This 207-nucleotide RNA was probed chemically with 2A3. The data come from the RNA Mapping Database (RMDB), library M2RFPK. The RNA was probed in 150 mM KOAc, 10 mM MgCl2 and 150 mM bicine (pH 8.5) at 24 C. The 2A3 profile rests on 754 reads.
RNA sequence: GGGAACGACUCGAGUAGAGUCGAAAAGCAAGCUAGCCGGCAAAAAAGCAAACUUGACCACCAAGGAUAAAAGAGAUCUUAUCCAAGGAUGCAAAAGAUAAUCUUACUUUUGACACCCACUGAUCUCAAAACGUGCGGUUCUUCGGAACCGCACGAAGAAUGACUGGUUCUUCGGAACCAGUCAUUCAAAAGAAACAACAACAACAAC
Reactivity to 2A3 in 0.01 (KOAc 150mM, MgCl2 10mM, bicine 150mM(pH8.5), 24C), signal-to-noise 1, nucleotides 027 to 156: g010c010a010a010g020c010u080a020g000c020c040g100g090c180a070a080a100a000a050a020g000c010a040a010a030c010u080u070g110a100c030c000a010c010c020a080a060g010g000a050u010a040a060a010a010g020a000g010a000u000c000u020u030a010u010c030c060a010a020g010g030a040u050g030c010a000a050a000a000g010a040u100a160a160u180c050u090u120a040c000u010u040u010u020g060a060c020a060c040c040c000a060c140u130g010a020u000c000u040c020a040a000a040a040c010g000u000g000c010g020g030u020u010c010u000u110c060g080g010a000a000c000c000g030c000a000c000g000a000a000